[RMDB]
RNA sequence: GGGAACGACUCGAGUAGAGUCGAAAAAGACACCGUUAUCCUAACUGGCUUAGCGAGCCACUCGGCAAGGUAGUAUGCAUAGGCCCUGGAGAGCGCGUCGUUGACACGGCGCCCGAAGAGAGAGUGGGUGUCAUGAAAGUUUCGACUUUCAUGACACAAAAGAAACAACAACAACAAC
Reactivity to 2A3 in 0.01 (KOAc 150mM, MgCl2 10mM, bicine 150mM(pH8.5), 24C), signal-to-noise 1, nucleotides 027 to 126: a000g030a010c070a020c070c000g000u020u110a040u100c010c010u030a080a050c050u060g050g030c000u090u060a050g010c020g030a010g020c000c000a020c010u040c030g010g000c050a010a010g060g000u000a010g040u030a090u150g080c050a030u040a100g120g000c020c000c000u010g050g000a100g000a020g060c070g000c010g040u020c000g030u010u140g080a020c020a020c150g000g000c020g000c040c010c000g040a080a010g050a010g000a020g010a000g040u060g050g090
Reactivity to DMS in 0.01 (KOAc 150mM, MgCl2 10mM, bicine 150mM(pH8.5), 24C), signal-to-noise 2, nucleotides 027 to 126: a050g000a120c060a130c060c040g000u000u010a110u000c050c020u000a070a150c150u000g010g000c040u010u020a090g000c060g030a130g000c010c040a040c060u010c050g000g010c070a060a070g020g010u010a030g020u000a040u020g000c070a110u010a070g000g030c020c000c020u000g000g000a160g010a100g060c170g020c010g060u000c010g000u000u020g020a100c130a070c040g000g010c000g010c000c020c010g000a120a080g020a090g000a100g000a050g030u000g010g020
The record gives the reactivity of an RNA of 177 nucleotides to 2A3 and DMS.
For 2A3, 1,413 sequencing reads were counted.
Conditions: 150 mM KOAc, 10 mM MgCl2 and 150 mM bicine (pH 8.5), 24 C.
It was measured as part of the RMDB library OK2TST.
DMS adducts were read by reverse transcription with MarathonRT.